[RMDB]
RNA sequence: GGGAACGACUCGAGUAGAGUCGAAAAGCGCUCGUGAACGUGACUUCACAAGACGGGCGCCGACAAGUUAGAUUGUCAAGGCGACAGUGUAGUGACACUGGGUAAUCUAACUUACCAAUCGCCGGCGCGUUGAGUCACGUCAACAACCGUCGAGCGAAUACCCCUAUACUUUCGAGUAUAGGGGUAUAAAAGAAACAACAACAACAAC
Reactivity to 2A3 in 0.01 (KOAc 150mM, MgCl2 10mM, bicine 150mM(pH8.5), 24C), signal-to-noise 6, nucleotides 027 to 156: g030c000g000c000u030c010g050u050g060a150a010c000g010u000g000a010c020u180u120c250a060c070a220a020g190a050c060g040g050g030c000g000c000c000g020a020c030a020a000g000u010u000a010g000a020u000u020g030u060c060a090a090g210g070c080g070a050c020a010g000u010g040u070a300g150u170g230a020c000a010c000u010g030g000g020u020a000a000u000c000u000a000a000c000u000u020a030c010c030a030a090u080c050g010c010c000g020g000c000g000c020g030u030u050g010a000g010u020c000a000c010g010u000c020a020a050c020a030a060c040c010g070u070c010g000a010g000c000g000a000
Reactivity to DMS in 0.01 (KOAc 150mM, MgCl2 10mM, bicine 150mM(pH8.5), 24C), signal-to-noise 3, nucleotides 027 to 156: g010c030g030c010u000c020g000u010g010a100a030c010g030u000g010a040c010u000u000c210a270c100a080a140g010a100c000g010g000g030c000g020c050c020g020a060c050a070a030g020u020u000a030g000a050u000u000g000u000c020a110a160g010g020c050g020a170c030a030g000u010g030u000a200g020u000g010a200c020a020c010u000g000g020g010u000a020a050u010c000u000a000a020c020u000u000a100c080c060a240a100u010c030g020c010c000g010g030c000g000c160g010u000u000g010a080g000u010c010a020c010g000u000c000a060a040c020a050a060c070c040g000u010c000g000a080g020c000g020a190